Structure probing data (DMS and 2A3) for a 177-nucleotide construct. Reactivities are given for positions 27 through 126. The data come from the RNA Mapping Database (RMDB), library RFMREP. Conditions: 150 mM KOAc, 10 mM MgCl2 and 150 mM bicine (pH 8.5), 24 C. For DMS, 962 sequencing reads were counted. For 2A3, 1,361 sequencing reads were counted.
RNA sequence: GGGAACGACUCGAGUAGAGUCGAAAAGAUAUCGCCGCUGAAGGAAUCAGCAAAGCCAUGCGCGGAGGCGCAAAGUUCCUGCAUCACGGCAUUAAGCGCCAGCAACGUUAUGUGGCAGAAGCCAUUACCAUAGCGAUGUGUUCGCACAUCGCUAUGGAAAAGAAACAACAACAACAAC
Reactivity to DMS in 0.01 (KOAc 150mM, MgCl2 10mM, bicine 150mM(pH8.5), 24C), signal-to-noise 2, nucleotides 027 to 126: g010a100u010a110u000c120g010c030c060g050c040u010g010a040a070g020g020a050a040u000c050a160g010c000a040a040a050g010c020c040a050u000g000c070g020c000g010g010a110g040g010c020g030c010a040a170a130g020u000u000c000c000u000g020c060a110u010c110a040c060g000g020c000a100u010u000a020a140g010c020g010c010c040a160g000c050a070a150c070g000u000u000a070u000g000u000g020g010c000a100g010a120a130g000c040c030a050u000u000a110
Reactivity to 2A3 in 0.01 (KOAc 150mM, MgCl2 10mM, bicine 150mM(pH8.5), 24C), signal-to-noise 2, nucleotides 027 to 126: g070a040u100a020u180c060g050c040c010g040c060u040g060a070a110g160g130a070a130u050c030a030g040c000a000a040a070g000c040c030a000u060g030c010g000c040g020g090a100g090g000c010g000c040a040a060a030g010u040u020c000c000u020g000c030a110u090c080a040c030g000g020c000a000u060u120a120a060g030c020g000c060c020a030g010c010a040a050c010g040u100u100a140u170g010u030g000g050c060a010g150a170a000g020c010c030a050u120u120a070